This 177-nucleotide RNA was probed chemically with 2A3. 2A3 adducts were read by reverse transcription with SuperScript II with manganese. The data come from the RNA Mapping Database (RMDB), libraries RFM100 and RFMREP. Conditions: 150 mM KOAc, 10 mM MgCl2 and 150 mM bicine (pH 8.5), 24 C.
[RMDB]
RNA sequence: GGGAACGACUCGAGUAGAGUCGAAAAGACAAUUGCUGUAUUCAUUCUCCUUUCUCGAUAGAGAUUGGAGUCAUACAACCCCAGAAACCAUUCCUUAUACCUUGAGUAUUGCUGAAUUCAGUUUAGCGCUUGAGACGCAGUUCGCUGCGUCUCAAGCAAAAGAAACAACAACAACAAC
Reactivity to 2A3 in 0.01 (KOAc 150mM, MgCl2 10mM, bicine 150mM(pH8.5), 24C), signal-to-noise 3, nucleotides 027 to 126: g110a050c160a040a070u180u170g000c030u060g010u030a050u050u070c010a010u090u000c070u000c000c010u000u000u000c000u000c020g210a210u070a270g010a000g000a000u000u000g000g000a010g010u000c000a030u020a070c070a010a160c020c010c000c000a040g100a030a060a030c040c030a080u030u030c000c010u120u090a020u040a130c030c020u060u180g060a020g060u050a110u110u100g060c060u050g040a080a060u130u050c010a050g080u020u080u140a020g030c010